[RMDB]
RNA sequence: GGGAACGACUCGAGUAGAGUCGAAAAGUAGUGCUCGAGAGGGAGGCUGUCUCGCAGAGCUUUUAGAUCUUCUGAUCUUUGCCUCCUCCAUAUCGCUUAUGCGUCAAGCGAUAGACGCAUAAUUAAAUUCAUUAAUUGUAUUCGUACAAUUAAUGAAAAAAGAAACAACAACAACAAC
Reactivity to 2A3 in 0.01 (KOAc 150mM, MgCl2 10mM, bicine 150mM(pH8.5), 24C), signal-to-noise 3, nucleotides 027 to 126: g050u080a010g050u020g060c020u010c060g100a070g010a030g030g050g010a010g030g050c050u060g090u110c020u000c030g050c070a070g050a070g130c000u050u130u060u060a020g010a010u010c000u250u070c100u300g000a030u000c000u040u040u050g030c000c000u000c000c000u040c010c030a110u120a050u130c060g000c030u030u000a000u020g010c010g010u020c010a020a070g130c040g100a060u040a080g000a000c010g000c000a000u000a020a010u070u100a050a030a030
Reactivity to DMS in 0.01 (KOAc 150mM, MgCl2 10mM, bicine 150mM(pH8.5), 24C), signal-to-noise 7, nucleotides 027 to 126: g000u000a080g010u000g010c030u000c030g010a070g010a150g010g010g010a030g010g010c030u010g010u010c030u000c030g000c200a110g010a150g010c080u000u010u010u010a040g000a030u000c010u000u010c250u010g010a030u000c010u010u000u000g000c010c000u000c010c000u000c020c030a100u010a050u000c040g020c220u010u000a010u000g000c010g000u000c010a060a140g020c140g000a100u000a070g010a010c010g010c000a000u000a010a030u010u000a030a040a110
The record gives the reactivity of an RNA of 177 nucleotides to 2A3 and DMS. For DMS the reverse transcriptase was MarathonRT. It was measured as part of the RMDB library M2PK90. As a SHAPE reagent, 2A3 marks flexible, mostly unpaired nucleotides at the ribose 2'-OH. 2A3 adducts were read by reverse transcription with SuperScript II with manganese. The DMS profile rests on 10,147 reads. The RNA was probed in 150 mM KOAc, 10 mM MgCl2 and 150 mM bicine (pH 8.5) at 24 C.